[RMDB]
RNA sequence: GGGAACGACUCGAGUAGAGUCGAAAAGAUAUGGAAUCCGUAGGGAGCGUGUGGUCGGAAACGACCAUAAACGCUUUGAUCUACGAUUCCUAAGUCAAACUUGUUAGUACUUCGGUACUAACAAGAAGAGUGUCUAUUACUUCGGUAAUAGACACUCAAAAGAAACAACAACAACAAC
Reactivity to DMS in 0.01 (KOAc 150mM, MgCl2 10mM, bicine 150mM(pH8.5), 24C), signal-to-noise 2, nucleotides 027 to 126: g030a000u000a010u010g000g010a000a000u000c110c150g000u000a010g000g010g000a000g080c010g070u010g030u000g000g010u030c000g000g010a000a000a010c000g000a020c000c000a000u000a010a070a040c000g040c000u000u000u010g020a000u010c000u000a010c010g000a020u000u000c000c000u010a010a070g000u000c000a140a110a240c000u000u000g010u000u000a000g020u000a000c000u000u030c280g030g010u000a000c000u010a000a000c000a010a000g000a150a120
Reactivity to 2A3 in 0.01 (KOAc 150mM, MgCl2 10mM, bicine 150mM(pH8.5), 24C), signal-to-noise 2, nucleotides 027 to 126: g000a000u020a000u030g000g010a010a000u050c180c090g000u000a010g000g010g010a010g020c000g000u020g000u010g000g010u000c010g000g000a030a000a000c000g000a000c000c050a020u060a030a160a000c000g000c000u100u180u020g000a000u030c000u010a000c020g000a000u000u010c000c000u010a000a000g000u000c000a010a080a120c010u000u010g000u000u010a010g010u020a010c010u040u070c300g060g000u020a000c000u020a000a010c000a020a010g010a090a060